Description: Chemical mapping of a 177-nucleotide RNA with DMS and 2A3.
[RMDB]
RNA sequence: GGGAACGACUCGAGUAGAGUCGAAAAACAGCCUGGAUACGUCCAGGCUGAAAUUCCUACAGUUACUGCUGACCCAAUAAUCUCUUAUAAUGAUAAGCAGUAAACAUCAGCGAUACGUCGCUGAUGAAACAUCUAUCCCCUUCGGGGGAUAGAUGUUAAAAGAAACAACAACAACAAC
Reactivity to DMS in 0.01 (KOAc 150mM, MgCl2 10mM, bicine 150mM(pH8.5), 24C), signal-to-noise 3, nucleotides 027 to 126: a080c000a000g010c000c000u000g030g000a020u000a070c140g010u000c000c000a020g000g000c000u000g000a010a020a070u010u000c000c000u000a100c240a130g020u020u000a000c000u000g000c000u000g000a140c260c050c020a090a060u010a100a040u030c170u030c180u040u020a060u000a090a060u010g020a030u000a140a020g000c010a000g000u000a000a040a200c040a020u000c010a000g010c000g000a030u000a090c210g030u000c000g030c000u000g000a020u000g000a040
Reactivity to 2A3 in 0.01 (KOAc 150mM, MgCl2 10mM, bicine 150mM(pH8.5), 24C), signal-to-noise 6, nucleotides 027 to 126: a000c000a000g000c000c000u010g000g000a000u020a050c200g030u030c010c000a000g000g000c010u010g010a000a010a010u020u000c000c000u000a060c020a080g070u030u020a000c000u000g000c000u030g060a080c010c010c060a060a060u170a190a190u120c080u040c030u170u230a180u100a280a140u110g040a030u020a040a020g000c000a010g000u000a020a040a000c000a000u000c000a000g000c000g010a000u010a060c280g070u030c000g000c000u010g000a000u000g010a010
DMS adducts were read by reverse transcription with MarathonRT.
The data come from the RNA Mapping Database (RMDB), libraries RFM100 and RFMREP.
High DMS reactivity at an A or C suggests that its Watson-Crick edge is free.